Conditions: 150 mM KOAc, 10 mM MgCl2 and 150 mM bicine (pH 8.5), 24 C.
This 207-nucleotide RNA was probed chemically with DMS and 2A3.
For 2A3 the reverse transcriptase was SuperScript II with manganese.
Reactivities are given for positions 27 through 156.
For DMS the reverse transcriptase was MarathonRT.
[RMDB]
RNA sequence: GGGAACGACUCGAGUAGAGUCGAAAAUUCGGUCCUAUGCAAUAUGAACCCAUGAACCAUGUCAGGUCCUGACGGAAGCAGCAUUAAGUGGAUCAUCAUAUGUGCCGUAGGGUAGCCGAGAUUUAGCUAACGACUUUGGUUACGUUCGUGAAUUACGCUAUCGUUUCGUGUUCGCACGAAACGAUAGAAAAGAAACAACAACAACAAC
Reactivity to DMS in 0.01 (KOAc 150mM, MgCl2 10mM, bicine 150mM(pH8.5), 24C), signal-to-noise 2, nucleotides 027 to 156: u000u000c010g040g000u000c010c000u010a060u000g010c050a060a050u000a010u010g010a110a140c090c010c010a040u000g020a120a240c160c280a090u000g010u010c040a300g020g030u000c050c010u010g010a220c290g000g050a100a170g010c060a230g000c020a100u000u000a090a300g010u020g000g010a050u000c090a100u000c000a050u000a020u010g000u000g030c050c020g030u000a030g000g000g000u010a220g000c000c000g010a080g000a070u000u000u000a080g060c030u000a060a090c090g000a040c010u000u000u000g010g000u000u000a080c190g000u010u000c050g000u000g000a100a100u020u000a060c140g000
Reactivity to 2A3 in 0.01 (KOAc 150mM, MgCl2 10mM, bicine 150mM(pH8.5), 24C), signal-to-noise 3, nucleotides 027 to 156: u020u010c000g030g110u300c000c000u000a000u000g000c010a000a000u010a010u000g000a010a010c000c000c000a000u030g010a040a020c110c060a040u010g060u070c000a020g050g000u010c020c010u120g120a100c170g010g000a000a010g000c020a000g000c000a020u000u020a120a040g000u010g030g010a040u030c030a010u020c000a000u090a000u060g270u040g100c060c070g000u000a000g010g010g030u020a030g020c000c010g010a010g000a010u030u050u140a030g020c060u080a030a030c000g000a010c000u050u040u110g120g000u140u180a070c060g000u010u030c050g000u010g100a070a150u140u070a070c070g020